[RMDB]
RNA sequence: GGGAACGACUCGAGUAGAGUCGAAAACUUCUUCAGAAAAUAAAAGGUAUGAUGAAUUAGAAAGCGUGAAUGCUGAGUGCAAUUGCGGUGAUGAAGAUUUAUAUAAUUCUUCGAUUUUUUCAGAUAUAGUCUUCCUUGCUAUGGUUCCAUUAGAAUCCAAUAUACCACGGUUCGCCGUGGUAUAUUGAAAAGAAACAACAACAACAAC
Reactivity to DMS in 0.01 (KOAc 150mM, MgCl2 10mM, bicine 150mM(pH8.5), 24C), signal-to-noise 2, nucleotides 027 to 156: c060u000u000c060u010u000c050a300g020a120a100a070a110u000a060a050a070a040g010g000u000a040u000g000a090u000g000a070a110u000u000a080g000a110a110a080g030c040g060u010g020a070a110u010g000c000u040g020a110g060u010g000c050a040a130u000u000g000c060g030g050u000g050a090u000g010a120a060g000a060u000u000u000a060u000a060u000a150a130u000u000c020u000u000c040g020a050u000u000u010u010u010u000c010a130g010a100u010a080u000a060g010u000c020u000u000c010c060u000u030g000c000u000a110u000g020g030u000u000c020c020a140u010u000a180g010a090a140u010c020
Reactivity to 2A3 in 0.01 (KOAc 150mM, MgCl2 10mM, bicine 150mM(pH8.5), 24C), signal-to-noise 2, nucleotides 027 to 156: c010u060u040c030u090u100c040a020g080a060a200a010a020u220a060a100a090a050g100g020u140a020u150g040a000u010g000a030a120u120u120a080g080a080a140a030g080c060g020u060g070a060a020u050g000c010u030g020a040g070u070g060c030a050a060u060u050g000c010g080g010u060g020a070u080g010a000a020g010a000u010u190u000a110u020a040u040a100a300u120u040c000u020u010c020g020a090u070u010u020u100u140u110c030a010g040a050u050a020u050a110g030u000c040u030u020c010c000u040u050g040c030u060a010u130g040g030u060u040c020c030a020u110u130a040g040a020a020u100c050
Overview: An RNA of 207 nucleotides, treated with DMS and 2A3 and read out base by base. For DMS, 2,801 sequencing reads were counted. Conditions: 150 mM KOAc, 10 mM MgCl2 and 150 mM bicine (pH 8.5), 24 C. For 2A3, 1,104 sequencing reads were counted.